[RMDB]
RNA sequence: GGGAACGACUCGAGUAGAGUCGAAAAGCUGAUAUUUAGAUAUUUUUAGUUGAAUAAAGAGGCAGGCGUCAGCGAUAUUGCAUUGUCGCUGUGGUGGGCAGAAAGCCACGGUAAUGCAUGUCCUGUAACGUACGUGGGAGUUCGCUCCCACGUACGUAAAAGAAACAACAACAACAAC
Reactivity to DMS in 0.01 (KOAc 150mM, MgCl2 10mM, bicine 150mM(pH8.5), 24C), signal-to-noise 1, nucleotides 027 to 126: g010c000u000g010a050u000a000u030u050u030a100g000a120u000a030u010u000u000u000u020a060g000u000u030g030a120a070u010a090a090a000g000a100g010g010c010a110g070g020c060g010u000c000a010g000c010g060a020u000a020u040u000g030c090a030u000u000g000u050c270g010c010u000g000u030g000g010u000g020g020g050c090a120g000a060a170a200g040c000c010a010c000g000g030u000a090a000u030g010c000a000u000g000u000c000c020u020g030u100a080
Reactivity to 2A3 in 0.01 (KOAc 150mM, MgCl2 10mM, bicine 150mM(pH8.5), 24C), signal-to-noise 1, nucleotides 027 to 126: g050c050u010g070a020u000a200u050u280u130a080g080a210u110a110u300u130u020u010u050a040g010u060u070g050a120a150u110a230a010a080g070a070g140g000c010a040g000g040c000g000u000c000a020g000c000g070a000u000a020u120u050g000c000a050u010u010g050u050c080g000c070u000g000u000g020g020u060g060g000g090c130a050g160a120a010a000g040c000c000a000c000g000g010u200a000a000u000g000c040a070u090g020u030c000c000u000g060u100a030